Source: RMDB library OK3TST, as collected in RNAgym. Structure probing data (2A3) for a 207-nucleotide construct. Values are in units of 0.01, from 0 to 300, in steps of 10.
RNA sequence: GGGAACGACUCGAGUAGAGUCGAAAACUGCAGGUCAACGGCGCGUCUUCAGAUCAGCUAUUGCAGAAGAAAGGUCAGCCAAGCGCUCUGGGCCCGCGCGACUGUAUAUAGGAGCUUCUGAUUUCAACCAGAAGCUAACUCUCUCCGAAACAAUGAGCUGAUACGAGCUGUUCGCAGCUCGUAUCAGAAAAGAAACAACAACAACAAC
Reactivity to 2A3 in 0.01 (KOAc 150mM, MgCl2 10mM, bicine 150mM(pH8.5), 24C), signal-to-noise 2, nucleotides 027 to 156: c060u040g010c000a030g010g150u180c070a070a030c070g100g000c020g000c000g050u000c030u180u120c020a070g000a150u020c020a060g010c010u070a060u270u190g010c060a100g020a170a010g150a150a230a000g120g070u100c030a010g000c050c020a040a000g020c010g000c030u010c000u030g000g020g000c030c060c000g000c000g000c000g040a030c020u020g080u060a020u010a010u070a210g130g050a000g000c000u000u000c000u020g080a150u150u190u300c050a060a030c030c000a010g000a020a000g000c010u000a020a020c000u040c000u000c000u010c020c050g060a100a080a070c050a080a190u230g020a050g020
Source information
Conditions: 150 mM KOAc, 10 mM MgCl2 and 150 mM bicine (pH 8.5), 24 C.